[RMDB]
RNA sequence: GGGAACGACUCGAGUAGAGUCGAAAACAGCAAAAAGGAACCGAUUCCCACCAAGUUCGGAAAGAGAUACCGGGCGAGGCGCUGAAGAAAGUAUCUCGCUUCAGACACCCCAAGGACUCGACUGAAGAAUGCACGCCAUCGUUCGCGAUGGCGUGAACGAAUAUAACAAGUUCGCUUGUUAUAUUCGAAAAGAAACAACAACAACAAC
Reactivity to DMS in 0.01 (KOAc 150mM, MgCl2 10mM, bicine 150mM(pH8.5), 24C), signal-to-noise 1, nucleotides 027 to 156: c040a210g000c050a040a060a090a170a060g000g000a020a110c020c020g000a170u010u000c000c020c000a160c070c060a130a110g010u010u000c000g000g010a060a090a110g000a100g010a130u010a090c040c010g040g040g000c070g000a110g010g010c010g000c020u020g000a040a030g000a110a050a040g010u010a040u000c040u000c040g000c090u000u010c000a040g010a300c070a030c040c000c030c030a070a090g000g000a140c060u000c020g020a090c060u000g010a080a130g000a070a110u000g010c000a000c000g020c060c010a010u020c000g040u010u010c280g030c040g020a030u010g000g020c000g020u000g000a040a070
Reactivity to 2A3 in 0.01 (KOAc 150mM, MgCl2 10mM, bicine 150mM(pH8.5), 24C), signal-to-noise 3, nucleotides 027 to 156: c010a020g080c040a020a040a060a060a010g140g040a070a030c050c040g050a090u040u030c010c010c010a000c000c050a120a020g030u040u020c020g010g030a110a100a030g040a020g000a010u050a070c020c000g000g000g000c070g020a050g040g060c100g010c030u050g000a030a010g020a030a270a000g050u090a160u090c110u070c080g000c000u010u000c000a030g010a070c030a060c030c010c000c010a020a070g000g010a030c010u020c030g040a050c050u060g010a010a030g070a070a070u150g040c000a000c000g000c000c000a000u010c000g040u050u050c210g010c010g080a000u000g000g000c000g000u000g000a000a000

Chemical mapping of a 207-nucleotide RNA with DMS and 2A3.
The RNA was probed in 150 mM KOAc, 10 mM MgCl2 and 150 mM bicine (pH 8.5) at 24 C.
For DMS the reverse transcriptase was MarathonRT.
The DMS profile rests on 2,346 reads.
The 2A3 profile rests on 2,725 reads.
Values are in units of 0.01, from 0 to 300, in steps of 10.